The data come from the RNA Mapping Database (RMDB), library OK3TST. Chemical mapping of a 207-nucleotide RNA with 2A3 and DMS. The DMS profile rests on 1,633 reads. DMS adducts were read by reverse transcription with MarathonRT. Reactivities are given for positions 27 through 156.
[RMDB]
RNA sequence: GGGAACGACUCGAGUAGAGUCGAAAAAGGCAGAGGCGCUUUUGCAGUUCAAGGCUUAGGCUUUUAGUUUUCAAGCAAGCAGCUUUUCAAGUUAGCAUUCAGCGCGCGCUUCAAGGCCAAGCACAUUUUUUAGGCGCAGAGGCUUAGUUGCCAAGAGCCUAGUUAAAUAUUUCGAUAUUUAACUAGGAAAAGAAACAACAACAACAAC
Reactivity to 2A3 in 0.01 (KOAc 150mM, MgCl2 10mM, bicine 150mM(pH8.5), 24C), signal-to-noise 1, nucleotides 027 to 156: a000g040g000c010a010g040a030g080g000c010g050c070u110u130u070u020g040c030a050g020u140u200c060a110a060g040g000c060u070u130a130g020g000c000u070u110u050u080a040g010u020u110u140u300c040a010a030g000c000a000a000g010c010a010g020c000u080u050u240u240c080a040a080g040u130u100a020g030c030a070u060u050c110a080g010c030g000c020g000c010g000c010u120u050c070a020a030g020g000c000c000a000a000g030c010a020c010a160u000u040u020u110u160u240a060g000g000c000g000c020a000g010a000g090g010c010u060u110a060g030u210u040g000c000c000a030a030g090a020g040
Reactivity to DMS in 0.01 (KOAc 150mM, MgCl2 10mM, bicine 150mM(pH8.5), 24C), signal-to-noise 1, nucleotides 027 to 156: a160g010g000c040a080g010a100g030g040c020g000c020u020u000u030u000g080c010a110g030u000u000c040a030a080g030g010c000u020u000a140g020g010c020u020u010u000u020a070g010u000u000u000u000c050a030a100g020c010a030a160g030c080a300g020c010u000u010u010u000c080a000a100g010u000u000a130g000c050a040u010u010c120a070g020c020g050c050g070c050g010c040u000u010c080a080a160g000g000c060c020a050a140g000c020a110c030a080u010u000u000u000u000u000a090g020g000c030g050c000a100g010a190g010g020c010u010u000a140g010u010u010g000c000c030a090a240g000a210g020